RNA sequence: GGGAACGACUCGAGUAGAGUCGAAAAUUAAAUGGACAAAUUGCGUCUAGCAAUAAUGAGAUUGAGCAAUAACAGGUCUGUGAUGCCCUUAGAUGCACGCGCGCUACAAUAAUAUUUCCUAGACCGAGAUUUCUUUUUGAUUCGUCAAAAAGAAAUCAAAAGAAACAACAACAACAAC
Reactivity to DMS in 0.01 (KOAc 150mM, MgCl2 10mM, bicine 150mM(pH8.5), 24C), signal-to-noise 6, nucleotides 027 to 126: u030u020a040a090a120u000g010g010a050c060a060a130a070u000u000g000c040g010u020c100u010a090g010c080a060a050u010a090a100u020g000a080g010a100u010u010g010a120g010c030a060a060u020a090a100c170a070g010g010u010c030u000g000u020g010a100u030g010c010c030c030u010u000a040g010a100u010g010c050a040c080g010c100g010c050g010c020u000a040c070a030a080u010a060a090u010a080u010u010u000c020c000u000a070g010a080c070c070g020a180
Reactivity to 2A3 in 0.01 (KOAc 150mM, MgCl2 10mM, bicine 150mM(pH8.5), 24C), signal-to-noise 9, nucleotides 027 to 126: u120u050a020a030a060u130g060g020a020c040a030a140a030u060u050g000c020g050u060c100u110a040g030c040a030a120u190a110a110u210g050a050g030a110u080u140g030a030g020c030a030a050u100a100a030c050a090g050g030u020c020u020g060u050g060a070u110g020c000c000c000u020u050a100g010a060u060g020c010a010c030g020c000g000c000g010c020u080a030c050a040a020u130a140a020u040a120u090u040u040c010c010u030a050g040a080c020c030g030a050
Chemical mapping of a 177-nucleotide RNA with DMS and 2A3. Values cover nucleotides 27 to 126. 2A3 adducts were read by reverse transcription with SuperScript II with manganese. High DMS reactivity at an A or C suggests that its Watson-Crick edge is free. Conditions: 150 mM KOAc, 10 mM MgCl2 and 150 mM bicine (pH 8.5), 24 C.